Conditions: 150 mM KOAc, 10 mM MgCl2 and 150 mM bicine (pH 8.5), 24 C. This 177-nucleotide RNA was probed chemically with 2A3 and DMS. 2A3 is a SHAPE reagent: it acylates the 2'-hydroxyl of flexible nucleotides of all four kinds. For 2A3 the reverse transcriptase was SuperScript II with manganese.
RNA sequence: GGGAACGACUCGAGUAGAGUCGAAAAAUAAGUGACUAAAGUCGAUUAAUGACUUUUUUUCCAUGGACAGACAGAUGAAAUUAUAUACGUAUUUCAUAUUAGAGCAAUGCAAUUUCAUGGACAUUGCCAUCAUGCGGUCAUUCGUGACCGCAUGAUGAAAAGAAACAACAACAACAAC
Reactivity to 2A3 in 0.01 (KOAc 150mM, MgCl2 10mM, bicine 150mM(pH8.5), 24C), signal-to-noise 2, nucleotides 027 to 126: a000u280a060a120g120u000g120a000c010u030a000a030a000g000u000c010g000a110u020u300a160a050u270g030a020c000u000u000u000u000u000u000u100c020c000a000u120g060g000a040c040a040g060a030c170a030g110a060u020g010a040a010a010u220u040a160u040a020u090a140c080g080u000a060u000u020u000c000a000u040a090u010u220a060g030a000g010c000a060a000u000g000c060a100a010u000u230u200c050a030u030g030g000a040c000a050u000u000g010c000
Reactivity to DMS in 0.01 (KOAc 150mM, MgCl2 10mM, bicine 150mM(pH8.5), 24C), signal-to-noise 2, nucleotides 027 to 126: a120u030a120a100g000u050g000a230c020u000a010a010a000g000u000c030g000a300u060u030a170a130u000g040a070c000u000u000u050u000u000u100u000c030c000a070u020g000g070a100c180a110g020a140c210a070g010a040u000g000a000a000a030u010u000a020u030a170u040a000c190g000u000a030u030u010u000c040a020u030a040u020u030a000g020a140g000c000a000a000u060g010c040a040a020u000u040u010c050a000u000g040g000a040c110a000u000u000g000c000
Source: RMDB library OK1LIB, as collected in RNAgym.